Structure probing data (DMS and 2A3) for a 207-nucleotide construct. Conditions: 150 mM KOAc, 10 mM MgCl2 and 150 mM bicine (pH 8.5), 24 C. For DMS the reverse transcriptase was MarathonRT. For DMS, 2,400 sequencing reads were counted. Values cover nucleotides 27 to 156.
[RMDB]
RNA sequence: GGGAACGACUCGAGUAGAGUCGAAAAACAUGGCUGGGGAGGCCUCACAAUCAUGGUGGAAGGCAAAGGCAGAGCAAAGGCGUGUCUUACGUGGUGGCAGGCAAGAAAGCAUAUGCAGGGGAACCACCCUUUAUCAACCCGUCAGAUCUCAUGAGAACGUCCAGCAUAUAUUCGUAUAUGCUGGACGAAAAGAAACAACAACAACAAC
Reactivity to DMS in 0.01 (KOAc 150mM, MgCl2 10mM, bicine 150mM(pH8.5), 24C), signal-to-noise 2, nucleotides 027 to 156: a090c060a140u000g030g000c010u010g040g000g000g020a120g040g000c020c040u000c060a030c020a050a100u000c060a050u030g000g080u020g000g020a160a090g000g060c000a070a050a160g030g020c010a090g000a170g060c100a070a080a080g050g030c000g000u010g000u000c090u010u000a110c090g030u000g030g030u000g040g000c080a030g000g030c070a060a130g000a120a090a110g000c070a230u010a150u000g020c040a120g000g060g000g030a080a110c030c040a050c030c030c040u000u000u000a070u030c010a060a120c010c000c030g030u000c000a060g030a020u000c080u000c040a080u000g000a140g000a080a190
Reactivity to 2A3 in 0.01 (KOAc 150mM, MgCl2 10mM, bicine 150mM(pH8.5), 24C), signal-to-noise 2, nucleotides 027 to 156: a000c120a100u140g030g000c030u050g030g010g030g000a020g030g000c010c020u040c000a050c020a020a170u170c070a080u110g030g010u040g010g050a100a080g030g000c020a070a030a040g030g000c030a030g020a080g030c030a100a050a000g080g010c040g000u030g010u000c030u040u070a060c080g060u060g020g000u020g040g000c020a010g080g000c020a050a030g060a140a050a000g040c060a070u070a040u210g040c020a030g000g000g000g030a030a010c040c010a040c020c030c000u020u040u030a160u050c030a020a060c000c000c000g040u030c030a030g010a150u010c030u000c030a050u010g050a020g020a100a040